Background:
This 177-nucleotide RNA was probed chemically with 2A3. Reactivities are rounded to 0.1 and cut off at 0 and 3. The reactions ran in a buffer of 150 mM KOAc, 10 mM MgCl2 and 150 mM bicine (pH 8.5), at 24 C. Source: RMDB library RFM100, as collected in RNAgym.
[RMDB]
RNA sequence: GGGAACGACUCGAGUAGAGUCGAAAAACACGGCUAGCUACGGCUAGCCGUGAGCUGAGGGCUGGGUCUUUGCGGGCGAGAUGAGGGUGUCGGAUCAACUGGCCUACAAAGUCCCAGUCCUCGGCAAGUAACCGGUGGACUUCGGUCCACCGGUUACAAAAGAAACAACAACAACAAC
Reactivity to 2A3 in 0.01 (KOAc 150mM, MgCl2 10mM, bicine 150mM(pH8.5), 24C), signal-to-noise 1, nucleotides 027 to 126: a000c010a000c000g000g000c000u000a000g000c010u000a030c260g250g000c000u000a010g010c000c000g010u000g000a000g000c000u020g000a020g010g000g010c000u010g020g000g000u000c010u000u000u020g030c000g000g000g000c010g180a010g000a090u050g030a190g050g100g130u190g050u200c110g060g030a050u000c000a000a130c040u010g050g010c000c000u000a000c000a000a000a000g000u000c000c000c000a000g000u000c000c000u000c000g000g000c000a000a000